[RMDB]
RNA sequence: GGGAACGACUCGAGUAGAGUCGAAAAGCAAAGCGCUACGGCCACCGCAUCACAGCGCACCCUGGUCAAUUUGUGCAAUUAGGCACGCCACGUGAAGAGGUGCUAGAACGCAGCAAAUUAGAUCUUAAAGCGCAUGCUGAUAUUUUCACGGCACUCGGAACACAAACGGAUUCGUCCGUUUGUGUUCAAAAGAAACAACAACAACAAC
Reactivity to 2A3 in 0.01 (KOAc 150mM, MgCl2 10mM, bicine 150mM(pH8.5), 24C), signal-to-noise 5, nucleotides 027 to 156: g040c040a050a080a060g030c020g010c040u070a060c060g060g000c030c050a080c040c010g050c040a060u080c040a010c060a030g030c010g000c020a060c010c000c000u030g010g010u030c020a020a040u000u020u050g020u010g000c030a060a110u120u060a180g030g000c020a030c040g170c080c020a100c060g070u140g070a060a060g070a050g080g010u010g000c010u050a090g040a140a020c100g000c040a050g070c010a090a030a010u050u030a090g000a010u030c000u040u190a120a100a030g020c000g000c010a020u050g020c000u010g000a050u040a110u120u130u030u030c110a080c000g020g000c040a010c050u090c080g070
Reactivity to DMS in 0.01 (KOAc 150mM, MgCl2 10mM, bicine 150mM(pH8.5), 24C), signal-to-noise 1, nucleotides 027 to 156: g010c040a030a140a150g030c000g040c000u000a130c070g020g020c060c060a180c140c000g000c050a060u000c100a130c030a050g070c050g000c040a130c010c050c070u000g020g030u000c060a100a110u010u000u000g000u000g000c030a100a130u010u000a190g000g010c050a020c020g000c030c000a120c110g030u000g050a100a130g000a120g000g060u000g010c000u000a040g010a080a100c110g000c060a180g000c030a040a070a100u000u000a070g030a060u000c050u020u000a030a100a070g030c000g000c050a110u000g000c040u030g000a130u000a090u020u030u000u010c020a030c020g010g000c070a090c060u010c030g010
Chemical mapping of a 207-nucleotide RNA with 2A3 and DMS. For 2A3, 3,022 sequencing reads were counted. It was measured as part of the RMDB library OK3TST. For DMS, 2,176 sequencing reads were counted.